[RMDB]
The record gives the reactivity of an RNA of 177 nucleotides to DMS and 2A3.
The data come from the RNA Mapping Database (RMDB), library OK1LIB.
The DMS profile rests on 1,851 reads.
For 2A3, 1,293 sequencing reads were counted.
For 2A3 the reverse transcriptase was SuperScript II with manganese.
For DMS the reverse transcriptase was MarathonRT.
Conditions: 150 mM KOAc, 10 mM MgCl2 and 150 mM bicine (pH 8.5), 24 C.
RNA sequence: GGGAACGACUCGAGUAGAGUCGAAAAGAAUGAUCAUGAUGGUAAAGAGAGAUACCCUCUGGGCGUUGUCCAGUUCCCAGAGGAGCAGCGCCCGUGGAGGAGCGCAAGGCGUAAAGCUGGGGUAGCUCCUACCCAUAGGCUUCGGCCUAUGGGUAGGAAAAGAAACAACAACAACAAC
Reactivity to DMS in 0.01 (KOAc 150mM, MgCl2 10mM, bicine 150mM(pH8.5), 24C), signal-to-noise 1, nucleotides 027 to 126: g000a030a050u000g020a110u000c000a050u000g000a150u000g000g000u000a020a090a060g030a140g000a070g000a180u000a090c060c000c020u000c040u030g010g020g000c110g030u020u000g000u000c030c080a050g000u020u000c000c010c000a130g010a060g020g010a100g000c030a030g020c020g000c000c050c000g000u030g000g010a070g000g020a080g000c030g020c100a130a010g040g010c000g000u000a060a020a150g000c010u010g000g000g020g020u020a060g040c050u080
Reactivity to 2A3 in 0.01 (KOAc 150mM, MgCl2 10mM, bicine 150mM(pH8.5), 24C), signal-to-noise 2, nucleotides 027 to 126: g070a000a120u180g010a040u100c080a010u110g080a050u020g050g020u080a050a120a020g080a010g000a000g010a040u070a110c000c000c000u030c000u000g000g000g030c060g050u000u010g000u000c030c020a090g050u030u000c000c000c000a000g020a050g050g020a010g010c000a010g040c000g030c000c040c000g050u050g000g090a060g030g000a060g000c030g000c010a040a040g040g000c000g060u120a140a020a030g000c000u010g000g000g000g040u010a020g050c050u010